[RMDB]
RNA sequence: GGGAACGACUCGAGUAGAGUCGAAAAAGGUGGCCGCGAUCUUCAAGGCCACGGCGCGGAUAGGUCCGCGCUGAUCGUUUUCCUCCAACGACGCUAUGGCGUCUUUCCUUCACCCGCAGGGGCGUUCAAAACUUCUCGAGGUUCGCCUCGAGAAGAACACUUACGGUAACUUCGGUUACCGUAAGUGAAAAGAAACAACAACAACAAC
Reactivity to 2A3 in 0.01 (KOAc 150mM, MgCl2 10mM, bicine 150mM(pH8.5), 24C), signal-to-noise 1, nucleotides 027 to 156: a000g000g010u000g000g010c020c010g090c030g010a010u000c000u000u000c000a020a010g000g000c000c000a000c000g000g010c000g000c000g040g040a050u060a230g290g220u070c000c000g000c000g000c000u000g000a000u000c000g010u120u050u060u040c000c000u000c030c010a050a070c070g030a010c000g010c020u110a100u230g230g010c000g000u030c000u010u030u020c010c000u050u050c050a040c020c020c040g030c100a100g000g020g020g030c040g070u090u170c060a040a040a000a130c000u010u000c000u000c000g000a000g000g000u020u050c140g060c040c000u000c000g000a020g000a000a000g000a000a000